[RMDB]
RNA sequence: GGGAACGACUCGAGUAGAGUCGAAAACAAAACGCAAUCGUAUGAUGCUUGACAUUGGGGGAAAGGGACUACUCACAGUGGUGGCUCAUUCGUUUCCAAUACAAGAUGUUAUCAGCCACAGCCAACCCGUAUUUAAUUACUUCGGUAAUUAAAUACGAAAAGAAACAACAACAACAAC
Reactivity to DMS in 0.01 (KOAc 150mM, MgCl2 10mM, bicine 150mM(pH8.5), 24C), signal-to-noise 9, nucleotides 027 to 126: c070a070a050a090a100c190g010c050a060a070u000c090g020u010a040u000g000a050u000g010c010u010u000g000a100c110a050u000u000g010g000g000g000g000a030a050a080g010g010g010a100c020u000a040c030u000c050a120c200a130g020u010g010g020u000g000g000c010u000c030a070u000u000c010g000u000u010u010c010c010a030a060u000a080c100a040a040g000a060u000g010u000u000a050u000c060a060g000c020c040a040c110a080g000c040c050a050a090c090c070
Reactivity to 2A3 in 0.01 (KOAc 150mM, MgCl2 10mM, bicine 150mM(pH8.5), 24C), signal-to-noise 8, nucleotides 027 to 126: c010a000a060a010a020c070g020c050a030a120u080c040g040u140a060u150g040a020u060g030c010u050u060g040a080c020a090u030u050g000g000g010g000g010a020a030a030g050g010g040a060c010u020a010c000u040c030a180c040a130g060u110g120g010u010g020g000c000u010c010a040u040u010c020g020u030u040u010c010c000a010a020u070a050c030a030a030g010a090u090g030u130u050a050u060c020a010g020c010c010a030c020a010g020c010c010a010a020c020c020
The record gives the reactivity of an RNA of 177 nucleotides to DMS and 2A3. For DMS, 15,898 sequencing reads were counted. The reactions ran in a buffer of 150 mM KOAc, 10 mM MgCl2 and 150 mM bicine (pH 8.5), at 24 C.